[RMDB]
RNA sequence: GGGAACGACUCGAGUAGAGUCGAAAAUGCAUACACACUCUUCCAUGCCCUACUUGAAAAUCCAGACUCCUUCCCCAGAGGUCUGGCAGGACAAGAUUCACUUGUGUCUGCUCUGCAUAUUGCCACCCGUGGGCAGACUCUUCGGAGUCUGCCCACGAAAAGAAACAACAACAACAAC
Reactivity to 2A3 in 0.01 (KOAc 150mM, MgCl2 10mM, bicine 150mM(pH8.5), 24C), signal-to-noise 2, nucleotides 027 to 126: u060g030c010a020u120a080c060a000c030a030c020u000c000u140u050c000c000a020u120g020c000c000c000u090a090c040u070u150g100a000a020a090a230u030c030c010a020g030a000c000u000c020c000u030u140c000c000c000c000a020g010a030g000g100u030c070u070g030g000c000a000g030g020a060c070a020a000g000a170u110u070c080a050c170u010u010g010u030g180u120c010u030g040c010u030c000u150g000c030a010u050a070u050u210g000c020c020a070c020c010

Structure probing data (2A3) for a 177-nucleotide construct. Conditions: 150 mM KOAc, 10 mM MgCl2 and 150 mM bicine (pH 8.5), 24 C. The data come from the RNA Mapping Database (RMDB), library OK1LIB. Reactivities are given for positions 27 through 126. Values are in units of 0.01, from 0 to 300, in steps of 10.